[RMDB]
RNA sequence: GGGAACGACUCGAGUAGAGUCGAAAAACGAGUCGUACGCGACUCGAAUGGUAUUGUCGGCGUAAAAGAACAAGACGUCACCGGACGCGACCGGGCUGAAAAGCGAAACGUCAUCUACGGAUGACGAAAAACGGACCUGGGUUCGCCCAGGUCCGAACACACCCUAAACGUUCGCGUUUAGGGUGUGAAAAGAAACAACAACAACAAC
Reactivity to 2A3 in 0.01 (KOAc 150mM, MgCl2 10mM, bicine 150mM(pH8.5), 24C), signal-to-noise 2, nucleotides 027 to 156: a020c010g000a000g000u000c030g030u030a040c230g000c020g130a000c010u000c000g000a000a070u050g020g050u150a150u130u230g090u130c050g000g000c010g000u020a080a110a080a110g090a060a030c040a070a070g100a020c010g000u010c010a000c020c000g010g000a030c000g000c020g020a000c000c000g020g000g000c070u100g020a080a020a040a000g000c000g000a080a060a120c000g000u000c000a000u000c000u000a040c210g110g000a000u000g000a000c000g040a080a020a000a000a010c010g010g000a000c000c000u000g000g000g060u030u040c100g060c080c000c000a000g000g010u000c000c000g000a000a000

This 207-nucleotide RNA was probed chemically with 2A3.